[RMDB]
RNA sequence: GGGAACGACUCGAGUAGAGUCGAAAAGGGAUCUACCGCAUCAUCAUCGUUACAAUAAAAAAUUCCCAUUCUAAUGUUCAUAAUUGCUUUUCUAAUCAUGGUAUGCAUGUUUGCUCUCUGAAUCUCUGUGGAAAUUAGAUCUGAUACACCUGUAAUCCCAUCGGUCUGAUUUCGAUCAGACCGAUGGAAAAGAAACAACAACAACAAC
Reactivity to 2A3 in 0.01 (KOAc 150mM, MgCl2 10mM, bicine 150mM(pH8.5), 24C), signal-to-noise 1, nucleotides 027 to 156: g120g020g000a020u000c030u170a060c000c010g000c000a000u070c000a010u000c010a000u110c030g140u130u260a140c130a210a120u170a110a160a000a000a020a000u110u020c030c030c030a000u160u000c070u130a100a110u040g060u000u040c070a020u050a230a030u140u140g000c020u170u050u070u000c030u120a050a100u030c000a000u110g140g000u180a080u150g050c040a030u040g030u080u000u200g080c000u010c000u000c000u010g130a050a040u030c020u000c030u030g060u110g000g150a080a000a000u020u050a010g020a000u030c000u020g010a090u000a090c030a000c010c000u020g070u020a000a000u070c040